[RMDB]
About this RNA
An RNA of 207 nucleotides, treated with 2A3 and read out base by base. Conditions: 150 mM KOAc, 10 mM MgCl2 and 150 mM bicine (pH 8.5), 24 C. It was measured as part of the RMDB library OK3TST. 2A3 adducts were read by reverse transcription with SuperScript II with manganese. 2A3 is a SHAPE reagent: it acylates the 2'-hydroxyl of flexible nucleotides of all four kinds. Values are in units of 0.01, from 0 to 300, in steps of 10.

RNA sequence: GGGAACGACUCGAGUAGAGUCGAAAAUCAUCUGGAGAAUCCACAACAGACGAGACUCCGGAACCAAUUACUUAUAAAGAAGAUCAUACAGUCACAGACACUAUCUCAUACACUACAGUAAGUACAUCAUCUGGAAUUGUCACUACUAAAUCAACCAGCCUAUAGCGUACUUCGGUACGCUAUAGGCAAAAGAAACAACAACAACAAC
Reactivity to 2A3 in 0.01 (KOAc 150mM, MgCl2 10mM, bicine 150mM(pH8.5), 24C), signal-to-noise 1, nucleotides 027 to 156: u010c000a000u000c000u010g000g020a010g010a010a060u050c060c080a080c030a300a000c000a090g250a100c210g080a120g000a000c110u010c000c000g000g000a090a040c010c020a000a300u110u160a150c060u090u030a020u110a140a150a060g030a030a000g000a060u140c010a030u010a180c030a100g050u040c030a010c000a060g010a110c000a010c120u020a050u050c060u000c030a130u020a060c000a000c000u210a000c000a020g050u120a080a020g050u030a020c000a020u020c000a000u020c000u080g070g070a140a180u010u060g020u040c030a000c000u000a000c000u020a070a000a180u040c030a050a030c000c000a000